Description: Source: RMDB library OK2TST, as collected in RNAgym. The record gives the reactivity of an RNA of 177 nucleotides to DMS and 2A3. For DMS the reverse transcriptase was MarathonRT. For 2A3 the reverse transcriptase was SuperScript II with manganese.
[RMDB]
RNA sequence: GGGAACGACUCGAGUAGAGUCGAAAAUUGAUGCGCAUAGGAUCCUGCGGAUCCUAGCGGAUCCCGUUGAUCUCGAGGAUCCGGAUCCGCGCCACAUAAGGAUCCCGGAUCCCAGAUCUGGGAUCCACAUCCUCUCCUAGUUCGCUAGGAGAGGAUGAAAAGAAACAACAACAACAAC
Reactivity to DMS in 0.01 (KOAc 150mM, MgCl2 10mM, bicine 150mM(pH8.5), 24C), signal-to-noise 4, nucleotides 027 to 126: u010u010g020a110u010g010c100g020c040a200u010a040g010g000a010u000c000c030u020g010c190g030g030a010u000c000c010u000a020g010c080g000g020a010u000c010c050c050g020u010u000g000a050u010c040u000c170g010a110g030g000a010u000c000c010g000g000a030u010c020c010g020c120g010c050c100a040c150a090u000a100a140g010g000a010u000c050c020c070g000g000a010u000c000c030c030a060g000a080u000c030u000g010g010g000a020u000c000c020a160
Reactivity to 2A3 in 0.01 (KOAc 150mM, MgCl2 10mM, bicine 150mM(pH8.5), 24C), signal-to-noise 3, nucleotides 027 to 126: u110u090g060a050u150g070c060g000c090a090u050a070g000g000a010u000c040c090u210g080c150g040g000a010u000c010c010u030a020g010c050g040g000a000u000c040c030c010g070u100u190g020a060u010c060u060c130g080a200g040g000a000u000c000c020g000g010a020u010c010c020g000c020g060c040c000a110c010a080u190a070a110g020g000a000u040c000c100c000g000g000a010u020c040c030c000a020g000a010u000c020u010g000g000g000a000u010c000c000a000
The RNA was probed in 150 mM KOAc, 10 mM MgCl2 and 150 mM bicine (pH 8.5) at 24 C.